[RMDB]
RNA sequence: GGGAACGACUCGAGUAGAGUCGAAAAGAUAUGGAGUAGCAUCGAUCUAUGCAGUCCGAAGAACAUCACAUGCUCUCGGAAACGAGAGCAUGUGAUGGGAGGACGCAUAGGGAGCUACUCCUAAGUCCCUCUACUUUUGGUUCGCCAAAAGUAGAGGAAAAGAAACAACAACAACAAC
Reactivity to DMS in 0.01 (KOAc 150mM, MgCl2 10mM, bicine 150mM(pH8.5), 24C), signal-to-noise 1, nucleotides 027 to 126: g000a070u000a280u010g020g010a000g060u020a000g000c000a250u010c180g020a110u010c010u010a000u000g000c010a180g030u010c000c000g000a120a150g000a140a270c000a000u000c000a000c010a000u000g010c000u020c000u010c010g000g030a130a100a210c000g000a000g000a020g000c020a000u000g000u000g020a010u000g000g000g000a150g000g000a010c000g000c010a010u010a000g010g010g010a070g010c010u000a000c000u000c000c000u000a030a130g010u000c050